RNA sequence: GGGAACGACUCGAGUAGAGUCGAAAAGCAACGAGCGUAAUCGCGUCUUGACUAGGGAGACUGUAGGUGACGUGAGUAUCUAUCCCAGUGUGCAUAGCGCACAAUACGCUGAUCUACAGUCAAUUAAGAGUUGGUUGAUUUUCGAAUCAACCAACUCAAAAGAAACAACAACAACAAC
Reactivity to DMS in 0.01 (KOAc 150mM, MgCl2 10mM, bicine 150mM(pH8.5), 24C), signal-to-noise 2, nucleotides 027 to 126: g000c080a060a060c040g000a090g000c010g000u010a060a070u000c030g030c000g040u000c000u030u000g030a140c100u020a140g000g030g010a120g000a020c010u010g000u010a010g010g030u000g000a030c020g030u000g000a050g010u000a100u000c200u000a170u000c010c000c000a130g000u000g020u000g030c020a160u030a080g030c120g000c000a020c030a030a040u000a150c010g000c020u000g000a060u000c000u000a010c010a010g010u000c000a050a080u040u000a050a050
Reactivity to 2A3 in 0.01 (KOAc 150mM, MgCl2 10mM, bicine 150mM(pH8.5), 24C), signal-to-noise 2, nucleotides 027 to 126: g060c030a000a050c020g100a010g030c000g010u040a100a060u100c010g000c010g050u020c020u090u170g140a140c040u110a110g040g130g050a170g020a040c000u000g000u020a000g050g010u020g000a000c010g020u010g020a000g050u060a060u010c060u070a100u010c000c000c010a030g000u010g010u010g000c060a190u090a230g040c040g010c020a000c010a000a020u020a000c000g000c000u050g020a010u000c000u000a030c000a010g000u000c010a030a000u150u110a150a060
The data come from the RNA Mapping Database (RMDB), library M2PK90. Chemical mapping of a 177-nucleotide RNA with DMS and 2A3. The RNA was probed in 150 mM KOAc, 10 mM MgCl2 and 150 mM bicine (pH 8.5) at 24 C. DMS (dimethyl sulfate) methylates the pairing face of unpaired adenines and cytosines. For DMS, 1,243 sequencing reads were counted.